[RMDB]
RNA sequence: GGGAACGACUCGAGUAGAGUCGAAAACUAGGACAGUUACUGCAGAGCUCCUAAGUCACCACUCAACCAGUGGCUGUUUCACAAGGAUUUGAGGGCACUUGCCUGUCUUGUGAGGUCUGUGCCACAAACGACGUAGUCGAUUCGUCGACUACGUCGUAAAAGAAACAACAACAACAAC
Reactivity to DMS in 0.01 (KOAc 150mM, MgCl2 10mM, bicine 150mM(pH8.5), 24C), signal-to-noise 3, nucleotides 027 to 126: c050u000a080g000g010a080c070a070g000u000u000a070c080u000g000c090a210g020a080g000c070u010c030c030u000a040a080g010u000c060a090c050c050a120c090u000c090a040a110c250c060a090g000u010g010g000c000u000g000u000u010u000c030a060c120a060a030g010g000a130u010u010u000g020a090g040g000g010c000a210c180u000u000g000c010c000u000g010u010c030u000u000g000u020g010a040g000g000u010c060u010g000u010g000c020c010a020c030a050a070
Reactivity to 2A3 in 0.01 (KOAc 150mM, MgCl2 10mM, bicine 150mM(pH8.5), 24C), signal-to-noise 3, nucleotides 027 to 126: c020u030a040g030g040a050c030a060g010u050u110a070c040u090g050c030a030g020a010g140c030u000c040c020u020a080a020g040u040c020a010c060c010a040c020u100c020a070a060c020c010a020g020u000g000g000c000u030g020u010u050u040c020a020c030a040a030g070g020a110u100u090u300g180a220g010g030g000c020a050c170u130u240g000c010c010u070g030u080c010u050u100g040u040g030a000g020g000u050c080u110g060u080g000c000c000a010c030a020a040